Structure probing data (2A3 and DMS) for a 177-nucleotide construct.
RNA sequence: GGGAACGACUCGAGUAGAGUCGAAAAAGUGUCGGCGGCCGUCCAUCAAGAAGUUUGCAACGACAAACCUUGUCGGAAGUGAUUGAGCCUCGCUACACUGAAUUAAUGGGGCUGGUCAAUCAAACCAAGCAUUUAGCAUGUUCGCAUGCUAAAUGCUAAAAGAAACAACAACAACAAC
Reactivity to 2A3 in 0.01 (KOAc 150mM, MgCl2 10mM, bicine 150mM(pH8.5), 24C), signal-to-noise 1, nucleotides 027 to 126: a020g050u060g050u020c030g010g000c010g070g070c080c020g030u000c010c000a020u030c010a020a000g050a260a000g060u080u040u050g000c060a290a100c050g170a120c100a020a030a010c000c040u020u090g030u080c130g050g100a080a100g040u180g050a050u060u030g040a050g000c020c000u040c060g000c000u050a020c050a010c050u050g020a080a100u140u130a110a050u140g010g030g020g000c030u050g020g010u050c050a030a040u050c000a030a050a020c000c000a050
Reactivity to DMS in 0.01 (KOAc 150mM, MgCl2 10mM, bicine 150mM(pH8.5), 24C), signal-to-noise 2, nucleotides 027 to 126: a080g000u000g000u010c100g050g020c070g030g010c020c030g020u000c010c050a180u000c030a090a040g010a090a090g020u000u000u000g010c080a110a170c260g000a110c010a020a040a050c090c020u000u000g000u010c050g000g000a070a070g020u000g010a040u000u000g010a060g010c030c000u000c040g020c050u010a020c150a090c100u000g030a040a130u010u000a060a060u000g020g030g000g010c090u000g000g010u000c050a040a040u000c100a020a130a140c100c140a100

The DMS profile rests on 928 reads. For 2A3 the reverse transcriptase was SuperScript II with manganese. It was measured as part of the RMDB library OK2TRN.